Record summary: Chemical mapping of a 207-nucleotide RNA with 2A3. The data come from the RNA Mapping Database (RMDB), library OK3TST. Reactivities are given for positions 27 through 156.
RNA sequence: GGGAACGACUCGAGUAGAGUCGAAAACGAAAAAACGUAAUUAUAAUAGCACAAAUAAUGGCAUUGUUGAGAUGUUUAAGACAGAUUACCUGUGAAUACUCCUCAAUGUUCCACGUGGAACAUUAAGUUAGAAUAUGGUAUGAUCAUAUCCUGCCAGCCCUCUAUCAUCGUUCGCGAUGAUAGAGGGAAAAGAAACAACAACAACAAC
Reactivity to 2A3 in 0.01 (KOAc 150mM, MgCl2 10mM, bicine 150mM(pH8.5), 24C), signal-to-noise 2, nucleotides 027 to 156: c050g200a150a000a000a000a000a000c060g020u100a030a100u200u090a240u090a300a030u120a040g060c030a070c080a150a130a040u160a060a060u260g060g000c030a080u000u140g090u070u100g020a060g060a080u040g110u080u170u150a060a010g000a050c040a000g010a050u020u150a040c040c000u010g000u010g090a060a040u060a060c090u060c040c020u040c010a000a000u000g040u030u030c040c060a150c300g130u300g000g000a000a000c000a000u010u010a020a020g020u020u090a050g000a180a020u100a040u130g020g000u060a000u210g030a000u060c050a000u040a020u160c000c090u020g020c030c050a050g000